[RMDB]
RNA sequence: GGGAACGACUCGAGUAGAGUCGAAAAGAGGUUCCCAUUCAAAGGGGAGAGGGGGGGACUUGGAGCACAGGGGUCCAGUUCAGUCCGUGGGAUUACCCCGGAUCUCCCGUUCUCCACACUCCUUCCCAAGGGGUAGACUUCGGUCUACCCAAAAGAAACAACAACAACAAC
Reactivity to 2A3 in 0.01 (KOAc 150mM, MgCl2 10mM, bicine 150mM(pH8.5), 24C), signal-to-noise 5, nucleotides 027 to 129: g100a020g020g030u030u020c000c030c000a020u130u110c060a010a020a030g010g010g000g010a100g010a050g000g000g000g000g000g000g000a000c020u060u140g020g030a020g030c080a010c020a080g010g000g000g000u010c040c020a030g030u090u150c030a030g060u050c060c040g070u150g020g020g010a080u120u220a150c020c000c010c000g020g030a030u010c010u020c000c000c010g000u030u010c000u000c000c000a040c000a040c030u040c000c000u030u020c000c000c000a010a040g020
Reactivity to DMS in 0.01 (KOAc 150mM, MgCl2 10mM, bicine 150mM(pH8.5), 24C), signal-to-noise 5, nucleotides 027 to 129: g030a100g040g000u000u010c030c010c000a140u060u070c110a070a150a150g000g050g000g010a090g000a090g030g030g030g020g010g000g010a040c030u010u060g010g020a090g000c140a030c130a150g020g010g050g010u030c180c060a090g010u070u050c070a070g010u030c040c050g040u060g030g020g010a100u030u080a160c070c040c010c000g010g040a070u040c040u020c000c000c000g000u020u010c040u000c020c050a070c110a040c000u030c050c060u010u000c100c000c010a100a140g050